Source: RMDB library OK2TRN, as collected in RNAgym. Chemical mapping of a 177-nucleotide RNA with 2A3 and DMS. DMS adducts were read by reverse transcription with MarathonRT.
RNA sequence: GGGAACGACUCGAGUAGAGUCGAAAACGUCGGGUGAAACUUUGUCAUCUUUAUGUCUAACCCACCUUGAGACAUUAGCUGGGUGACUUUACAUAGUGUCCACAACUUAUUCAACCUUGCAUUAAGGAGUAUAAGCCCUAUUCGUAGGGCUUAUACUAAAAGAAACAACAACAACAAC
Reactivity to 2A3 in 0.01 (KOAc 150mM, MgCl2 10mM, bicine 150mM(pH8.5), 24C), signal-to-noise 2, nucleotides 027 to 126: c060g050u070c080g020g000g040u040g050a090a070a020c050u050u080u190g050u000c020a030u000c000u030u130u050a070u100g020u000c020u020a060a080c000c020c020a040c000c010u070u100g110a060g000a010c020a070u160u140a040g000c080u070g020g000g030u020g040a020c000u120u080u040a040c040a020u100a040g030u010g040u070c010c010a020c020a090a070c040u050u090a090u150u070c010a050a110c000c010u010u020g010c010a120u140u180a120a020g030g030
Reactivity to DMS in 0.01 (KOAc 150mM, MgCl2 10mM, bicine 150mM(pH8.5), 24C), signal-to-noise 6, nucleotides 027 to 126: c100g000u010c140g010g010g020u000g000a090a110a100c110u000u020u000g010u000c050a030u000c030u000u000u000a040u010g010u000c060u000a160a110c030c010c020a070c130c060u010u010g010a110g000a070c090a060u000u000a040g020c120u000g000g000g010u000g010a040c060u010u000u000a060c100a070u000a070g010u010g000u000c050c060a050c090a050a040c070u010u010a110u000u000c090a050a150c050c020u010u000g010c140a100u000u010a050a050g000g010